RNA sequence: GGGAACGACUCGAGUAGAGUCGAAAACUUGAGCUCAGGAGCUGGAGAUCAGUCUGGGCAGCAUGGCGAAACCCCAUCUCUACAAAAAAUACAAAAAUUAGCUGAGCAUAGUGGUAUGCUCCUGUGGACCGUCUAAAUGAUUCGUCAUUUAGACGGUAAAAGAAACAACAACAACAAC
Reactivity to DMS in 0.01 (KOAc 150mM, MgCl2 10mM, bicine 150mM(pH8.5), 24C), signal-to-noise 4, nucleotides 027 to 126: c040u010u000g010a130g020c070u000c030a040g010g010a060g030c060u000g000g010a130g010a070u010c030a020g020u010c020u000g000g000g000c000a060g020c050a030u000g010g000c040g010a050a070a080c030c000c000c030a070u000c020u000c030u010a050c070a000a010a030a020a030a020u000a050c090a030a030a030a050a050u000u000a050g000c090u000g000a030g020c010a040u000a030g010u010g000g000u000a030u000g000c020u010c010c090u010g010u000g000g000
Reactivity to 2A3 in 0.01 (KOAc 150mM, MgCl2 10mM, bicine 150mM(pH8.5), 24C), signal-to-noise 4, nucleotides 027 to 126: c020u060u090g040a000g020c000u000c030a030g030g080a120g090c030u030g060g040a150g020a140u200c000a000g070u010c010u020g020g050g000c010a010g010c010a020u030g050g000c050g010a040a080a100c010c030c000c010a070u040c030u000c000u080a090c080a020a140a040a020a030a020u150a070c040a000a120a040a040a080u150u090a050g030c100u050g000a000g000c010a020u010a020g100u090g150g060u040a010u040g010c020u020c060c010u100g040u040g080g050